[RMDB]
RNA sequence: GGGAACGACUCGAGUAGAGUCGAAAACUGGCCUGUGUGGAAGUACGUGAGUACUUCGUGCUCUACGGGAGUAGAGCCACACAGAUCGUGGAGCGAUGUCCUGGAACUACUCCCGUAGUUCGCGUAUGACUCACGUCAUACCAGGACGCCAGCCACGCGAUGCAUGUUAGUUCGCUAACAUGCAUCGAAAAGAAACAACAACAACAAC
Reactivity to 2A3 in 0.01 (KOAc 150mM, MgCl2 10mM, bicine 150mM(pH8.5), 24C), signal-to-noise 6, nucleotides 027 to 156: c010u010g000g000c030c020u110g020u030g010u020g140g060a170a080g050u140a020c010g020u030g020a010g000u120a220c020u030u050c020g020u070g020c000u000c000u020a000c010g030g010g000a010g000u000a000g010a030g020c000c000a000c000a000c000a010g120a050u020c020g030u100g190g160a140g120c030g010a030u040g030u080c010c020u020g020g010a070a080c010u000a000c000u010c000c000c010g000u000a000g010u050u070c030g000c010g040u120a040u160g010a010c000u000c020a000c000g000u000c000a000u030a020c000c000a020g050g020a020c030g010c010c000a010g020c010c010a060c030g030
Reactivity to DMS in 0.01 (KOAc 150mM, MgCl2 10mM, bicine 150mM(pH8.5), 24C), signal-to-noise 1, nucleotides 027 to 156: c050u000g000g000c020c000u000g020u000g020u030g020g010a120a120g020u000a010c010g000u000g000a270g040u020a070c010u000u000c020g060u000g000c050u000c000u010a020c000g010g030g010a260g050u000a010g000a100g040c000c000a030c020a050c030a050g010a040u000c000g040u000g000g010a180g000c000g000a050u000g020u000c070c010u010g030g010a050a090c010u000a010c000u010c070c060c090g030u000a010g000u000u000c040g050c050g050u010a060u000g010a080c000u000c090a060c150g000u010c020a080u010a040c030c000a100g000g000a090c070g060c000c020a060g000c020c020a070c010g020
Structure probing data (2A3 and DMS) for a 207-nucleotide construct.
The 2A3 profile rests on 6,418 reads.
The data come from the RNA Mapping Database (RMDB), library OK3TST.
The DMS profile rests on 3,769 reads.
Conditions: 150 mM KOAc, 10 mM MgCl2 and 150 mM bicine (pH 8.5), 24 C.
For 2A3 the reverse transcriptase was SuperScript II with manganese.
DMS adducts were read by reverse transcription with MarathonRT.